[RMDB]
RNA sequence: GGGAACGACUCGAGUAGAGUCGAAAAACAUAUGGCGGUACGCCGCCAUAUGAAUUUGGUCCUCGGUAGUGGUUUCCGGAAAGUUUGUUAAUUAAAUUUGCCGUGAACUUCGAUCGAUGAUCCAAAAAACAGUCCCGUCAUUCGUGACGGGACUGUUAAAAGAAACAACAACAACAAC
Reactivity to 2A3 in 0.01 (KOAc 150mM, MgCl2 10mM, bicine 150mM(pH8.5), 24C), signal-to-noise 1, nucleotides 027 to 126: a000c000a000u000a000u040g000g000c000g000g050u030a010c270g070c070c000g000c000c000a000u000a000u000g000a010a010u070u040u050g000g000u040c040c020u000c040g010g000u010a020g000u000g060g000u000u080u010c020c000g000g000a060a040a000g040u020u050u080g120u170u220a180a160u130u070a010a060a000u000u000u010g030c020c030g050u050g030a000a000c000u000u000c010g010a000u040c010g000a010u030g000a050u150c000c000a000a080a000a000

An RNA of 177 nucleotides, treated with 2A3 and read out base by base. For 2A3, 648 sequencing reads were counted. For 2A3 the reverse transcriptase was SuperScript II with manganese.